Chemical mapping of a 177-nucleotide RNA with 2A3 and DMS. The reactions ran in a buffer of 150 mM KOAc, 10 mM MgCl2 and 150 mM bicine (pH 8.5), at 24 C.
RNA sequence: GGGAACGACUCGAGUAGAGUCGAAAAAAUUUGAGCGUCGCACACACUCAGACUAAGUCUGCUGCUGACAGAGCCUAAACCGCUCUGUCAGUGUGCGAGAUAUCGUUCUUAAUGUGAGCAGAAGAAAUUGAAGGAGAUAAUUCGUUAUCUCCUUCAAAAAAGAAACAACAACAACAAC
Reactivity to 2A3 in 0.01 (KOAc 150mM, MgCl2 10mM, bicine 150mM(pH8.5), 24C), signal-to-noise 3, nucleotides 027 to 126: a000a000u160u060u070g030a060g010c070g050u060c060g060c010a010c000a000c020a010c020u020c040a010g010a030c040u120a190a000g030u010c000u000g030c010u030g040c020u000g020a000c010a000g000a000g000c020c000u020a030a020a040c000c020g000c010u010c000u000g000u000c000a000g000u000g000u010g010c020g050a010g010a010u070a010u080c030g050u130u030c000u040u070a120a090u080g050u040g040a030g000c060a040g030a150a010g050a030a210a100
Reactivity to DMS in 0.01 (KOAc 150mM, MgCl2 10mM, bicine 150mM(pH8.5), 24C), signal-to-noise 9, nucleotides 027 to 126: a070a090u000u000u000g000a030g020c040g010u000c090g010c030a060c020a070c040a180c030u000c040a020g010a030c030u010a110a160g010u000c010u000g010c060u000g000c070u000g000a010c000a010g000a010g010c000c010u000a050a070a110c300c300g000c000u000c000u000g000u000c000a010g010u000g010u010g010c000g000a020g010a050u000a120u000c080g010u000u000c010u000u000a070a070u000g010u000g000a100g020c030a110g010a070a080g000a040a060a120
Annotation:
For DMS, 14,642 sequencing reads were counted.